[RMDB]
RNA sequence: GGGAACGACUCGAGUAGAGUCGAAAACAGAACUGGCUUCGGCCAGUUCUGAUGGGGGGCGUAGCUCAGAUGGUAGAGCGCUCGCUUAGCAUGUGAGAGGUACCGGGAUCGAUACCCGGCGCCUCCACCAGGUUCUCCAUCUAUUCGUAGAUGGAGAUAGACUUUCAUAGUUCGCUAUGAAAGUCUAAAAAGAAACAACAACAACAAC
Reactivity to DMS in 0.01 (KOAc 150mM, MgCl2 10mM, bicine 150mM(pH8.5), 24C), signal-to-noise 2, nucleotides 027 to 156: c010a010g030a000a020c000u000g010g020c010u000u000c300g050g000c000c000a010g020u000u000c000u010g000a030u000g000g040g000g010g060g020c040g090u000a130g020c000u000c030a120g020a110u020g040g040u020a150g000a090g000c030g020c090u000c090g020c010u010u000a150g010c050a160u020g080u010g000a120g010a060g040g040u000a020c000c000g000g020g020a130u000c130g000a300u000a190c000c010c000g000g000c000g030c000c000u010c000c000a030c010c070a100g010g010u000u000c000u000c000c000a020u000c000u000a060u000u000c240g010u000a000g030a050u000g000g000a010g010a030
Reactivity to 2A3 in 0.01 (KOAc 150mM, MgCl2 10mM, bicine 150mM(pH8.5), 24C), signal-to-noise 2, nucleotides 027 to 156: c000a010g000a000a000c000u000g000g000c010u050u030c220g120g000c000c010a000g000u000u010c000u000g000a010u040g010g000g010g000g000g000c000g050u050a000g010c000u020c030a120g050a300u180g130g050u120a020g010a030g010c030g070c020u000c020g070c000u090u120a040g110c040a090u210g010u000g010a130g000a000g040g000u020a040c000c000g030g000g010a090u260c070g030a020u050a150c010c000c000g010g000c010g000c010c010u000c010c000a000c010c000a050g120g080u080u040c000u000c000c000a000u000c000u020a020u040u080c250g080u030a000g000a000u000g000g000a000g000a000